[RMDB]
RNA sequence: GGGAACGACUCGAGUAGAGUCGAAAAAGUUUGAGUGUGGUAGCGCUGUGUGAGUUGGCGGUGGAACCCCCUCGUGGUGACACGAGCCCCCGUGGCCAAAAGCCCAGUGUUUACAGCACCUCUCACAGUUACAUUCAAACUUCGGUUUGAAUGUAACAAAAGAAACAACAACAACAAC
Reactivity to DMS in 0.01 (KOAc 150mM, MgCl2 10mM, bicine 150mM(pH8.5), 24C), signal-to-noise 2, nucleotides 027 to 126: a090g000u000u000u010g000a040g030u000g030u010g030g030u000a030g000c050g020c000u000g010u000g010u010g000a120g000u010u010g000g000c040g020g010u010g000g020a090a300c020c040c030c100c000u000c000g020u000g020g000u010g000a280c010a020c000g010a010g000c040c020c020c010c010g010u020g020g010c020c010a010a040a130a300g000c020c010c030a030g010u000g010u000u000u000a050c050a150g000c000a010c040c030u000c010u000c030a060c130a090
Reactivity to 2A3 in 0.01 (KOAc 150mM, MgCl2 10mM, bicine 150mM(pH8.5), 24C), signal-to-noise 2, nucleotides 027 to 126: a000g080u090u090u080g090a100g010u080g000u000g010g040u020a000g030c030g000c020u000g000u000g010u030g030a300g150u020u010g040g000c020g050g010u110g060g030a160a180c040c020c000c000c010u000c010g020u010g010g060u060g020a030c000a010c020g020a020g010c010c000c000c000c000g050u140g120g000c010c020a020a020a000a000g000c000c030c000a010g000u000g000u040u120u020a020c010a030g000c000a010c010c010u020c000u000c000a050c010a010
The record gives the reactivity of an RNA of 177 nucleotides to DMS and 2A3.
The RNA was probed in 150 mM KOAc, 10 mM MgCl2 and 150 mM bicine (pH 8.5) at 24 C.
It was measured as part of the RMDB library RFMREP.
DMS (dimethyl sulfate) methylates the pairing face of unpaired adenines and cytosines.
For DMS, 2,265 sequencing reads were counted.